[RMDB]
RNA sequence: GGGAACGACUCGAGUAGAGUCGAAAACUCUCGAGGAGACUCGAGAGAGCAUGCUUCGGCAUGCAAGGGUCGGCAUGGCAUCUCCACCUCCUCGCGGUGCGACAUGGGCAUCCGAAGGAGGACGCACGUCCACUCGGGUGGCUAAGUGAGAGCCAAACAGGCAUGAUAUAUUCGUAUAUCAUGCCUGAAAAGAAACAACAACAACAAC
Reactivity to 2A3 in 0.01 (KOAc 150mM, MgCl2 10mM, bicine 150mM(pH8.5), 24C), signal-to-noise 4, nucleotides 027 to 156: c010u010c000u000c000g010a000g030g030a090g040a060c010u000c000g010a000g000a000g000a010g010c010a010u040g010c010u060u050c130g080g000c010a000u000g000c000a010a060g090g010g000u050c040g010g050c090a080u070g010g000c020a250u020c010u020c010c010a020c000c000u040c000c020u060c040g020c170g000g020u010g010c030g070a120c070a250u180g050g080g050c000a000u000c000c000g070a060a060g030g060a060g000g000a000c020g040c000a100c080g030u000c030c000a020c030u060c030g110g020g010u040g020g020c010u030a080a060g040u090g160a020g010a000g010c000c010a000a020a010
Reactivity to DMS in 0.01 (KOAc 150mM, MgCl2 10mM, bicine 150mM(pH8.5), 24C), signal-to-noise 2, nucleotides 027 to 156: c000u000c000u000c000g010a070g040g030a300g000a220c010u000c000g000a040g010a030g040a080g020c030a010u000g020c000u000u000c150g050g140c000a020u020g030c050a050a100g000g000g040u000c010g000g000c130a160u000g010g020c020a080u000c010u010c010c010a160c010c010u000c080c050u000c070g020c160g000g050u010g010c050g020a180c110a150u020g010g030g000c000a020u000c010c000g030a090a100g010g010a160g020g010a010c020g030c070a040c090g000u000c020c090a060c000u000c030g000g010g060u000g000g030c090u000a080a160g000u000g000a030g020a300g070c010c000a010a140a250
Annotation:
The record gives the reactivity of an RNA of 207 nucleotides to 2A3 and DMS. Conditions: 150 mM KOAc, 10 mM MgCl2 and 150 mM bicine (pH 8.5), 24 C. The DMS profile rests on 2,332 reads. Values cover nucleotides 27 to 156. 2A3 is a SHAPE reagent: it acylates the 2'-hydroxyl of flexible nucleotides of all four kinds. The data come from the RNA Mapping Database (RMDB), library OK3TST.